[RMDB]
RNA sequence: GGGAACGACUCGAGUAGAGUCGAAAAACGGGCAGUGGCGAUGGCAACGCGGCAGCCGCAGGGUCGACUUCUUCGCAGCCGCAACAGACGGGAGACGGGCAAAGAGGGGGUCUCGUUCUGUUGGAAGCUCCGUACCUAAUUUCGAUUAGGUACGGAGAAAAGAAACAACAACAACAAC
Reactivity to DMS in 0.01 (KOAc 150mM, MgCl2 10mM, bicine 150mM(pH8.5), 24C), signal-to-noise 2, nucleotides 027 to 126: a010c030g030g010g030c020a110g000u000g000g000c060g000a040u060g010g030c020a120a060c120g030c080g000g010c080a060g040c010c040g010c040a060g040g010g020u000c070g010a080c120u040u000c050u010u030c070g000c030a100g020c050c040g000c000a010a010c030a050g030a020c090g000g000g000a050g000a080c170g010g000g030c170a010a020a070g020a180g050g000g000g070g010u010c000u000c010g000u040u000c010u010g070u000u010g040g020a140a040g010
Reactivity to 2A3 in 0.01 (KOAc 150mM, MgCl2 10mM, bicine 150mM(pH8.5), 24C), signal-to-noise 5, nucleotides 027 to 126: a000c030g000g000g010c050a080g030u050g070g010c050g060a090u090g070g010c020a070a020c070g010c010g040g010c010a020g040c030c020g000c030a030g060g010g030u060c040g040a060c020u060u010c000u050u050c080g010c060a020g040c030c020g060c020a010a030c010a020g020a000c020g000g010g010a030g030a050c060g040g000g000c070a060a080a030g050a070g010g000g000g000g010u000c000u010c020g030u070u050c020u020g030u020u020g020g030a050a020g010